[RMDB]
RNA sequence: GGGAACGACUCGAGUAGAGUCGAAAACAAUGUUAAGACUAAGCCGAUUGGAUAUGCGUUGGCCGCGGCGAGAUACGUUAAACACAACAACUUCGGCAUGGCCGAGAUAUACCUUGAUAGAUUUGAGUGAAGCGUAUAGCUUCGGCUAUACGCUUCAAAAAGAAACAACAACAACAAC
Reactivity to DMS in 0.01 (KOAc 150mM, MgCl2 10mM, bicine 150mM(pH8.5), 24C), signal-to-noise 3, nucleotides 027 to 126: c060a090a090u030g000u010u000a050a100g030a040c090u020a060a220g000c000c000g030a090u000u030g030g000a070u030a010u040g000c070g000u000u010g020g040c010c030g000c030g020g000c000g030a110g000a060u010a020c110g020u000u010a100a120a050c190a020c140a000a080c180a110a080c080u010u000c050g010g000c010a090u010g000g010c010c000g020a020g000a020u000a050u000a040c060c040u010u000g000a070u010a090g000a110u000u010u020g030a120g000
Reactivity to 2A3 in 0.01 (KOAc 150mM, MgCl2 10mM, bicine 150mM(pH8.5), 24C), signal-to-noise 2, nucleotides 027 to 126: c050a020a070u160g000u040u120a070a080g020a000c010u040a040a040g020c010c000g110a070u140u300g030g030a070u110a010u130g290c190g050u020u060g060g010c020c000g000c010g010g030c020g010a010g050a020u180a040c010g050u090u070a110a120a000c130a000c020a060a080c020a070a030c070u120u050c000g000g000c070a110u070g070g000c000c010g030a000g030a020u060a030u070a130c020c040u000u050g000a020u080a110g100a080u190u070u180g040a090g070